[RMDB]
RNA sequence: GGGAACGACUCGAGUAGAGUCGAAAAGGCACAGAGAAGUGGGAUAUCAAACUUUACUCAGGCAGAGUUUAUAAAUAGAGGAUGAGGUCUGGGCUGAGAUCUUGCUGUUUUAGGGAAAUGCAACUCAGAAAGUUACCAGAAGUGGUGGUCAAAAGAACAUGCCAUCAUUGUUCGCAAUGAUGGCAUGAAAAGAAACAACAACAACAAC
Reactivity to DMS in 0.01 (KOAc 150mM, MgCl2 10mM, bicine 150mM(pH8.5), 24C), signal-to-noise 1, nucleotides 027 to 156: g050g030c000a080c050a180g010a070g000a050a030g080u020g040g010g010a050u020a100u010c030a090a060a070c050u030u020u000a030c000u000c110a080g000g000c020a030g000a120g020u000u000u000a060u000a050a070a290u000a080g000a150g060g010a060u000g010a070g000g070u000c000u020g000g010g030c060u000g000a090g000a090u000c060u000u010g040c000u000g010u000u000u000u030a210g020g010g010a030a060a050u010g010c070a060a050c040u000c010a130g120a050a130a140g040u000u000a050c020c010a090g000a110a040g030u030g000g040u000g000g010u000c040a020a070a030a150g000a110a070
Reactivity to 2A3 in 0.01 (KOAc 150mM, MgCl2 10mM, bicine 150mM(pH8.5), 24C), signal-to-noise 2, nucleotides 027 to 156: g000g010c020a030c030a020g080a020g020a140a000g030u030g020g050g010a070u110a030u130c090a090a040a040c000u090u100u070a050c040u050c070a020g000g000c060a010g030a000g050u050u100u060a170u090a060a140a100u180a030g030a000g010g020a010u060g010a020g030g020u020c020u070g000g040g000c000u010g030a010g010a050u090c050u060u080g000c010u010g080u020u050u020u200a060g000g020g000a000a070a000u060g000c000a020a090c000u010c030a000g040a010a040a030g030u030u100a060c020c040a040g020a070a010g030u060g060g000u030g000g040u040c050a190a000a000a000g020a060a010

Structure probing data (DMS and 2A3) for a 207-nucleotide construct. The RNA was probed in 150 mM KOAc, 10 mM MgCl2 and 150 mM bicine (pH 8.5) at 24 C. The DMS profile rests on 1,469 reads. Reactivities are given for positions 27 through 156.